Source: RMDB library RNAMAK, as collected in RNAgym. An RNA of 207 nucleotides, treated with DMS and 2A3 and read out base by base.

RNA sequence: GGGAACGACUCGAGUAGAGUCGAAAAGGGGUCUCCCUUAGUACGUCGCUAUCGAGGUACCACUGAAGCCUCCACGGUGGUACUACCCACCGAUAGAACUACGACGGAACAGGGAGACGGAGGCACCCAAAGAGUACCGUCUUCGGACGGUACUCAACAUAGUGGUCAACUUCGGUUGACCACUAUGAAAAGAAACAACAACAACAAC
Reactivity to DMS in 0.01 (KOAc 150mM, MgCl2 10mM, bicine 150mM(pH8.5), 24C), signal-to-noise 2, nucleotides 027 to 156: g010g000g040g000u010c000u000c000c010c030u020u000a070g010u000a160c030g030u000c000g020c060u010a010u000c000g010a180g000g000u000a110c020c000a060c000u000g010a070a050g000c000c020u010c000c000a300c030g000g000u000g010g000u020a030c000u000a060c060c010c000a300c000c000g010a020u000a040g000a060a050c080u010a300c010g000a120c020g000g000a190a210c240a040g030g010g000a050g020a010c000g010g010a040g060g070c020a060c000c000c050a150a130a100g030a010g010u010a000c000c000g000u000c000u010u000c300g040g010a010c000g000g010u000a000c000u010c000a030a140
Reactivity to 2A3 in 0.01 (KOAc 150mM, MgCl2 10mM, bicine 150mM(pH8.5), 24C), signal-to-noise 2, nucleotides 027 to 156: g100g010g030g000u000c010u000c010c000c010u000u000a010g000u010a010c000g010u010c010g000c040u000a000u000c000g000a000g010g000u000a000c000c000a000c010u030g050a180a010g020c000c000u020c000c010a000c000g000g000u000g010g000u000a010c000u000a020c040c040c030a030c010c000g000a000u000a000g030a070a050c190u300a070c130g010a000c000g010g000a010a000c000a010g020g000g010a000g000a000c000g000g000a000g010g020c000a020c000c000c000a080a150a020g000a000g000u010a000c000c000g030u010c010u040u120c270g090g010a000c000g000g000u010a000c000u000c000a000a000
The RNA was probed in 150 mM KOAc, 10 mM MgCl2 and 150 mM bicine (pH 8.5) at 24 C.